Chemical mapping of a 177-nucleotide RNA with 2A3 and DMS.
RNA sequence: GGGAACGACUCGAGUAGAGUCGAAAAGAUAUGGAAUGCAAGGGGCCAUUGGUCGUUGAAAUCGGAAACGAUGGAGACCUUUGGUUACCAACCAUUCCUAAGUCAAACGAGAUCUUCGGAUCUCGAAGUCCACCAUAAGGUUCGCCUUAUGGUGGACAAAAGAAACAACAACAACAAC
Reactivity to 2A3 in 0.01 (KOAc 150mM, MgCl2 10mM, bicine 150mM(pH8.5), 24C), signal-to-noise 1, nucleotides 027 to 126: g010a020u070a030u150g000g010a000a000u010g030c030a070a050g000g040g020g010c020c000a000u020u000g000g010u000c030g180u290u090g000a020a020a010u010c010g000g020a030a040a010c030g000a010u020g020g000a020g000a010c000c000u030u000u010g000g000u020u020a200c030c000a000a000c000c000a000u000u000c000c000u020a080a010g060u040c080a100a030a010c040g000a000g000a020u000c020u010u120c300g120g000a000u000c000u000c020g010a040a010
Reactivity to DMS in 0.01 (KOAc 150mM, MgCl2 10mM, bicine 150mM(pH8.5), 24C), signal-to-noise 2, nucleotides 027 to 126: g020a070u000a300u010g000g000a060a040u000g000c050a070a300g000g000g000g010c010c000a000u000u000g000g000u000c000g000u000u000g010a010a150a000u000c020g000g000a110a050a170c000g010a010u000g000g000a090g010a010c000c000u000u000u000g010g000u000u000a010c000c000a050a300c300c000a010u000u000c000c000u000a050a110g000u000c020a060a070a160c000g000a030g000a000u010c000u000u000c190g010g000a010u000c000u000c000g010a030a100
The 2A3 profile rests on 3,146 reads. It was measured as part of the RMDB library TTRDEL.